[RMDB]
An RNA of 177 nucleotides, treated with DMS and read out base by base. DMS adducts were read by reverse transcription with MarathonRT.
RNA sequence: GGGAACGACUCGAGUAGAGUCGAAAAUCACUGGCUCUCCAAGUGCCAGAGGUGGGCAGGUGGUGGCACUGAGCCCCCCCAACACUGUGCCCUGGUGGAGAAAGCACUGACCUGUCAUGCCCCCCUCGAGUUCAGUUUAGUUCGCUAAACUGAACUCAAAAGAAACAACAACAACAAC
Reactivity to DMS in 0.01 (KOAc 150mM, MgCl2 10mM, bicine 150mM(pH8.5), 24C), signal-to-noise 2, nucleotides 027 to 126: u010c060a120c050u000g000g000c020u000c070u000c220c210a150a130g010u000g020c010c020a050g020a070g000g010u000g010g010g020c000a070g000g020u000g000g020u000g010g010c030a030c050u000g010a120g010c010c010c000c000c010c000c020a120a070c080a050c060u010g010u000g000c020c010c020u000g020g030u000g000g010a120g010a150a080a130g000c030a030c050u000g000a050c020c040u000g000u000c030a120u010g000c010c000c000c000c010c030u000c120
The reactions ran in a buffer of 150 mM KOAc, 10 mM MgCl2 and 150 mM bicine (pH 8.5), at 24 C.